[RMDB]
RNA sequence: GGGAACGACUCGAGUAGAGUCGAAAAAGCUUACAGCUGUAUGCUAAGUUUAAUUAGUUAAUGCUGCUAAUUAUGAAGCCUAAAAAGUUGUGUUUCCCUCGCUAUCCAGUGCUGUAAUUAAUGCUGUUUAGAAUACAGUAUUCGUACUGUAUUCUAAAAAAGAAACAACAACAACAAC
Reactivity to DMS in 0.01 (KOAc 150mM, MgCl2 10mM, bicine 150mM(pH8.5), 24C), signal-to-noise 9, nucleotides 027 to 126: a070g020c080u000u010a060c030a040g010c020u000g010u010a060u000g010c010u000a060a110g000u010u010u010a040a050u000u000a010g010u000u010a080a120u020g020c150u000g000c040u000a030a040u010u000a040u010g000a140a080g010c010c060u010a040a060a080a080a060g010u000u000g010u000g000u000u000u000c010c010c010u000c080g010c050u010a070u010c060c050a060g010u000g010c020u000g010u000a040a070u010u010a060a080u010g020c040u000g000u000
Reactivity to 2A3 in 0.01 (KOAc 150mM, MgCl2 10mM, bicine 150mM(pH8.5), 24C), signal-to-noise 6, nucleotides 027 to 126: a000g010c030u050u040a020c020a010g020c010u050g050u150a030u120g020c020u020a060a040g030u100u090u130a100a070u000u010a020g020u030u090a150a050u190g080c070u030g010c010u020a030a010u020u060a040u150g120a030a020g020c000c030u110a060a060a030a030a040g070u070u060g010u060g030u020u010u020c010c010c010u000c000g050c000u030a060u080c020c020a040g060u020g060c020u050g060u110a090a080u080u130a090a070u110g040c030u010g000u020
Annotation:
This 177-nucleotide RNA was probed chemically with DMS and 2A3. It was measured as part of the RMDB libraries RFM100 and RFMREP. The reactions ran in a buffer of 150 mM KOAc, 10 mM MgCl2 and 150 mM bicine (pH 8.5), at 24 C.